Source: RMDB library M2PK50, as collected in RNAgym. This 177-nucleotide RNA was probed chemically with 2A3 and DMS. For 2A3 the reverse transcriptase was SuperScript II with manganese. As a SHAPE reagent, 2A3 marks flexible, mostly unpaired nucleotides at the ribose 2'-OH. Conditions: 150 mM KOAc, 10 mM MgCl2 and 150 mM bicine (pH 8.5), 24 C. For 2A3, 20,059 sequencing reads were counted.
[RMDB]
RNA sequence: GGGAACGACUCGAGUAGAGUCGAAAAGUUGUCUUCUUCGGAAGACAACAAAUAUAAUCAGCGGUAAAUAAUUCGAGGCGUUUACCGCUGAACGCCUCGAUAAAACUUGAGCCUUCGGGCUCAAGAACUAUAGAUGUAUGUUCGCAUACAUCUAUAGAAAAGAAACAACAACAACAAC
Reactivity to 2A3 in 0.01 (KOAc 150mM, MgCl2 10mM, bicine 150mM(pH8.5), 24C), signal-to-noise 8, nucleotides 027 to 126: g000u000u000g000u000c000u010u000c010u030u050c220g090g000a000a000g000a000c000a000a000c000a000a000a000u100a010u020a020a130u050c000a000g020c010g080g130u130a070a100a080u110a100a170u210u120c060g010a010g000g000c000g010u000u010u030a090c010c000g000c000u000g000a000a000c000g000c000c000u000c010g010a050u100a090a140a010a050c000u000u000g000a000g000c000c000u030u060c270g070g000g000c010u000c000a000a000g000a000a010
Reactivity to DMS in 0.01 (KOAc 150mM, MgCl2 10mM, bicine 150mM(pH8.5), 24C), signal-to-noise 6, nucleotides 027 to 126: g010u000u000g000u000c000u000u000c000u000u010c190g030g000a020a000g000a010c000a000a000c000a030a070a080u010a060u010a080a070u000c010a010g020c010g010g010u010a050a060a050u000a060a120u010u010c080g000a020g010g020c020g010u000u000u000a080c030c010g000c010u000g010a000a010c020g010c010c000u000c020g010a110u010a030a070a090a130c000u000u000g010a010g010c000c000u000u010c200g040g010g010c000u000c000a000a000g000a050a120